Source: RMDB library M2RFPK, as collected in RNAgym. An RNA of 207 nucleotides, treated with DMS and 2A3 and read out base by base. 2A3 adducts were read by reverse transcription with SuperScript II with manganese. The DMS profile rests on 4,904 reads.

RNA sequence: GGGAACGACUCGAGUAGAGUCGAAAAGUAAAGAUCGCUCUUUUACUCGGCAUGAUACCACCGUUAUCGGGUCAACAGAGUAGGUGCAAAUGACAACAAUGCUCAGGGUUAUGCUCUCGCUGCCUAAAAAAUCGUUUAACGUUCGCGUUAAACGAAAGCAUAACAUACCGUUCGCGGUAUGUUAUGCAAAAGAAACAACAACAACAAC
Reactivity to DMS in 0.01 (KOAc 150mM, MgCl2 10mM, bicine 150mM(pH8.5), 24C), signal-to-noise 2, nucleotides 027 to 156: g020u000a050a100a090g000a120u020c130g040c060u010c040u000u000u000u000a040c030u000c020g020g050c020a050u020g010a110u000a110c030c010a210c000c010g020u000u000a060u000c120g000g000g000u010c010a090a180c130a120g020a060g020u010a040g030g000u000g010c050a080a090a090u000g010a090c040a050a050c040a060a060u010g000c010u000c030a110g000g010g000u000u010a070u000g040c050u010c000u000c040g000c020u000g010c010c030u020a010a010a030a090a070a110u000c000g040u000u010u000a000a010c000g010u000u000c260g010c040g000u000u000a010a010a010c010g000a000a020a070
Reactivity to 2A3 in 0.01 (KOAc 150mM, MgCl2 10mM, bicine 150mM(pH8.5), 24C), signal-to-noise 8, nucleotides 027 to 156: g030u050a020a060a000g040a120u150c080g020c110u040c010u050u070u020u040a030c020u020c010g000g000c020a010u090g010a010u030a040c010c010a010c010c020g060u050u030a040u090c040g010g000g010u020c010a010a030c050a030g070a010g040u080a030g030g030u030g040c020a040a070a130u150g040a060c020a100a000c010a080a140u080g010c010u030c050a020g060g000g010u080u090a050u160g020c000u010c010u020c060g000c040u050g020c010c020u140a080a060a020a020a020a050u040c000g000u000u000u000a000a010c000g010u030u030c250g000c000g080u000u000a000a010a010c000g000a010a000a000

Annotation: DMS adducts were read by reverse transcription with MarathonRT.